[RMDB]
RNA sequence: GGGAACGACUCGAGUAGAGUCGAAAAGUAAGAUGAUUCGUCAUCUUACGAACCCGAUGAAGCGGGACAUACCGAGCUUCAUACAUCUAAGAGUGCAAAUAAUGGCGCGUGGUUUCGACCACGCGAACCUAGUUCGUAAGUUCGCUUACGAACUAGGAAAAGAAACAACAACAACAAC
Reactivity to DMS in 0.01 (KOAc 150mM, MgCl2 10mM, bicine 150mM(pH8.5), 24C), signal-to-noise 5, nucleotides 027 to 126: g000u000a000a000g010a010u000g000a010u000u010c190g010u000c000a000u000c010u000u000a000c000g010a050a150c010c000c000g000a030u010g000a030a010g030c000g000g010g020a220c250a130u010a110c020c020g000a120g030c010u000u000c000a020u000a120c130a060u010c070u010a080a100g000a060g030u000g010c150a050a070a070u010a050a110u000g010g020c010g020c000g020u000g000g000u000u000u010c200g010a030c000c000a010c010g030c000g000a010a060
Reactivity to 2A3 in 0.01 (KOAc 150mM, MgCl2 10mM, bicine 150mM(pH8.5), 24C), signal-to-noise 6, nucleotides 027 to 126: g000u000a000a000g000a010u010g010a020u010u090c110g070u020c080a000u010c000u000u000a000c000g000a020a030c000c010c000g010a030u020g000a000a000g000c010g020g020g060a180c080a120u230a150c040c030g030a070g020c000u000u000c000a010u040a050c040a060u040c050u150a130a050g110a080g170u150g100c080a070a100a090u200a110a120u290g200g000c010g010c010g000u000g030g000u030u060u130c210g050a030c010c000a000c000g000c000g000a000a000